[RMDB]
RNA sequence: GGGAACGACUCGAGUAGAGUCGAAAACGUUGAAUGCCGGGGAGCGUGGUUUACUAAUUUUUAUAUGCGAUAUAAACCGCAACAUUAAAUCCAGCUUGCAAUGAAAAUAACGCCCGCCUGGUAUGUGCUAAUCUUGUCGAUUCGUCGACAAGAUUAGAAAAGAAACAACAACAACAAC
Reactivity to DMS in 0.01 (KOAc 150mM, MgCl2 10mM, bicine 150mM(pH8.5), 24C), signal-to-noise 2, nucleotides 027 to 126: c080g020u020u000g000a160a060u000g000c010c000g010g010g010g010a070g000c030g040u000g000g020u000u010u020a120c080u050a100a060u000u010u010u010u000a040u020a090u010g010c070g000a110u000a100u000a050a050a090c180c080g020c020a010a050c140a110u000u010a000a060a060u010c110c080a070g000c120u010u010g000c050a040a060u000g010a070a070a010a040u000a120a060c040g010c020c000c030g000c020c000u000g010g020u000a020u010g000u010g020
Reactivity to 2A3 in 0.01 (KOAc 150mM, MgCl2 10mM, bicine 150mM(pH8.5), 24C), signal-to-noise 1, nucleotides 027 to 126: c010g050u040u200g110a160a010u070g000c020c020g000g000g050g000a020g010c000g010u040g000g050u040u060u040a020c010u050a140a130u070u100u050u040u100a170u060a090u210g010c020g000a000u000a020u060a170a080a000c030c030g000c000a000a020c010a060u090u140a060a030a100u090c020c000a020g000c010u060u000g000c080a070a120u080g030a090a050a010a000u060a000a030c020g020c030c000c000g220c030c030u010g020g000u020a020u090g050u020g040

Source: RMDB library OK2TST, as collected in RNAgym. The record gives the reactivity of an RNA of 177 nucleotides to DMS and 2A3. The 2A3 profile rests on 833 reads. For DMS the reverse transcriptase was MarathonRT. 2A3 adducts were read by reverse transcription with SuperScript II with manganese.